About this RNA
This 177-nucleotide RNA was probed chemically with DMS and 2A3. For DMS, 1,718 sequencing reads were counted. Reactivities are rounded to 0.1 and cut off at 0 and 3. The RNA was probed in 150 mM KOAc, 10 mM MgCl2 and 150 mM bicine (pH 8.5) at 24 C. Source: RMDB library M2PK50, as collected in RNAgym. 2A3 is a SHAPE reagent: it acylates the 2'-hydroxyl of flexible nucleotides of all four kinds.

RNA sequence: GGGAACGACUCGAGUAGAGUCGAAAACUAACCACGUUCGCGUGGUUAGAAAAGCGGCCAGCACCAGGCCGCCAAACAAUAUGGAGCACAAGACGAAAGUCAAAAGUAUCUGCUUCGGCAGAUACAACCAUUUAAGUCACUUCGGUGACUUAAAUGGAAAAGAAACAACAACAACAAC
Reactivity to DMS in 0.01 (KOAc 150mM, MgCl2 10mM, bicine 150mM(pH8.5), 24C), signal-to-noise 3, nucleotides 027 to 126: c000u000a000a010c000c000a000c000g020u010u020c260g030c000g060u010g000g000u000u000a000g020a060a070a090a190g000c000g040g000c000c000a090g030c020a120c030c000a010g000g020c000c000g030c010c090a030a040a040c120a000a050u000a070u000g020g000a110g020c020a220c300a070a100g010a010c000g000a060a110a150g010u000c040a030a080a080a130g000u000a010u000c000u000g000c000u000u020c250g020g000c000a000g000a000u000a010c000a080a100
Reactivity to 2A3 in 0.01 (KOAc 150mM, MgCl2 10mM, bicine 150mM(pH8.5), 24C), signal-to-noise 2, nucleotides 027 to 126: c000u000a000a010c000c000a010c010g020u040u030c150g000c000g110u010g010g000u000u000a000g000a000a080a010a020g010c000g010g000c000c010a030g010c010a010c020c000a010g010g010c010c020g000c000c020a070a140a010c040a020a000u040a030u080g010g000a020g000c020a030c040a140a050g020a000c010g030a100a050a010g030u040c020a090a040a020a080g000u000a000u010c000u000g030c000u030u040c130g090g000c000a010g000a000u010a010c010a000a010